[RMDB]
RNA sequence: GGGAACGACUCGAGUAGAGUCGAAAAGAUAUGGAAUAACGGUUCAAUGUCCAUCCAGCGAAGAACAUACGGGAUCGGAAACGAUCUUAUGGGAGCUGGUGGACAUUGAACCGUUAUUCCUAAGUCACACAUGAGAAGUGUUCGCACUUCUCAUGUGAAAAGAAACAACAACAACAAC
Reactivity to DMS in 0.01 (KOAc 150mM, MgCl2 10mM, bicine 150mM(pH8.5), 24C), signal-to-noise 2, nucleotides 027 to 126: g010a050u010a300u020g000g000a020a020u010a010a000c010g010g010u000u000c000a000a000u020g000u020c000c000a000u040c020c020a010g030c000g030a070a200g030a130a210c020a000u000a030c300g010g010g000a020u010c000g000g000a140a080a270c000g020a010u000c000u000u000a030u000g010g020g020a060g000c000u000g020g000u000g000g000a000c030a000u000u000g000a010a000c000c010g010u000u000a000u000u000c000c010u010a020a090g000u000c050a300